[RMDB]
RNA sequence: GGGAACGACUCGAGUAGAGUCGAAAACGCCGACGAUCACCGCCCGACUCAACUUCCAGCUGGCGUUCGGCGCCCGGGUCGGCCAGCGCUUGGCCGAUGCCCGAGAGCAGACUCGGCAGGAAGCCACCAUACAAUAACCCUUCGGGGUUAUUGUAUGAAAAGAAACAACAACAACAAC
Reactivity to DMS in 0.01 (KOAc 150mM, MgCl2 10mM, bicine 150mM(pH8.5), 24C), signal-to-noise 5, nucleotides 027 to 126: c100g020c020c010g000a060c040g000a070u010c020a020c020c010g010c010c010c020g010a080c070u010c110a110a180c020u000u010c030c030a090g010c020u010g000g010c130g000u030u010c030g000g000c030g000c020c030c030g010g000g010u010c020g000g020c020c010a020g010c290g030c190u060u010g010g000c010c010g000a080u020g010c030c000c000g000a060g010a140g030c030a090g000a040c040u010c000g000g000c000a060g010g000a050a040g000c030c040a080c150
Reactivity to 2A3 in 0.01 (KOAc 150mM, MgCl2 10mM, bicine 150mM(pH8.5), 24C), signal-to-noise 9, nucleotides 027 to 126: c030g020c020c000g020a030c020g020a060u050c020a010c030c010g030c010c000c010g070a060c020u030c090a040a060c020u030u020c010c010a030g010c020u030g040g020c080g080u110u060c060g120g030c020g030c020c010c000g010g000g000u030c000g010g020c010c000a090g040c170g090c180u120u040g000g000c000c000g020a030u110g090c000c000c010g080a090g000a010g040c030a010g010a080c010u010c020g010g000c010a020g020g020a020a000g010c010c010a070c030
This 177-nucleotide RNA was probed chemically with DMS and 2A3.
For DMS the reverse transcriptase was MarathonRT.
For 2A3, 28,816 sequencing reads were counted.
It was measured as part of the RMDB library OK1LIB.